RNA sequence: GGGAACGACUCGAGUAGAGUCGAAAAGAUAUGGAGCAUAUCAGAGCGCUACAGGUUGGAGAAUCUGUAUCGGAAACGAUACAGAUUCUCCAUCUGUAGAACUACGCUCUGUAAGUGCUCCUAAGUCGAUGACGUCAUAGUUCGCUAUGACGUCAUCAAAAGAAACAACAACAACAAC
Reactivity to DMS in 0.01 (KOAc 150mM, MgCl2 10mM, bicine 150mM(pH8.5), 24C), signal-to-noise 1, nucleotides 027 to 126: g000a080u000a300u010g010g000a020g050c000a080u010a300u010c000a000g010a010g010c000g010c000u000a000c020a000g010g020u000u000g010g010a060g000a010a000u000c000u010g000u000a000u000c000g000g010a190a110a190c000g010a000u000a010c000a000g000a010u000u000c010u000c000c000a000u000c000u000g010u000a000g000a110a080c260u040a300c010g000c000u010c000u010g000u010a030a290g010u000g000c000u000c000c010u000a040a140g010u000c130
This 177-nucleotide RNA was probed chemically with DMS. The reactions ran in a buffer of 150 mM KOAc, 10 mM MgCl2 and 150 mM bicine (pH 8.5), at 24 C. Source: RMDB library TTRINS, as collected in RNAgym.